Source: RMDB library OK2TST, as collected in RNAgym. The record gives the reactivity of an RNA of 177 nucleotides to 2A3 and DMS. For DMS the reverse transcriptase was MarathonRT.
[RMDB]
RNA sequence: GGGAACGACUCGAGUAGAGUCGAAAAUGAAUUGGAGCCCAAAGUGAUAACUCAGACAUCCACAGAAUCUUUUUGGGUUUGCAUUCCUGGAUAGGCCAAUUGGCUUAGUACUUCCUGUGCUUUGAUGGCUACCAGAUAAAUUCGUUUAUCUGGUAGCAAAAGAAACAACAACAACAAC
Reactivity to 2A3 in 0.01 (KOAc 150mM, MgCl2 10mM, bicine 150mM(pH8.5), 24C), signal-to-noise 7, nucleotides 027 to 126: u060g020a020a030u110u080g030g020a020g010c020c000c000a010a010a000g020u020g020a030u060a200a080c020u040c110a030g050a200c040a150u070c070c030a080c010a100g070a090a040u020c010u050u170u020u040u030g000g000g000u040u030u060g080c010a000u020u020c010c010u040g030g070a070u030a030g030g000c000c030a110a300u170u280g020g000c010u020u000a020g030u040a070c030u040u040c000c020u070g040u060g100c050u110u110u120g100a140u160g130
Reactivity to DMS in 0.01 (KOAc 150mM, MgCl2 10mM, bicine 150mM(pH8.5), 24C), signal-to-noise 8, nucleotides 027 to 126: u000g010a060a060u000u010g020g010a050g010c000c010c010a020a030a040g010u000g010a040u000a080a100c080u000c160a120g010a140c150a070u010c110c110a080c180a070g010a170a050u000c010u000u000u010u000u000g010g000g010u000u000u010g020c050a060u000u000c020c100u010g010g010a140u000a020g000g020c020c020a270a150u010u010g010g020c010u000u000a020g010u000a100c130u000u000c020c020u000g010u010g000c070u000u000u010g010a190u000g010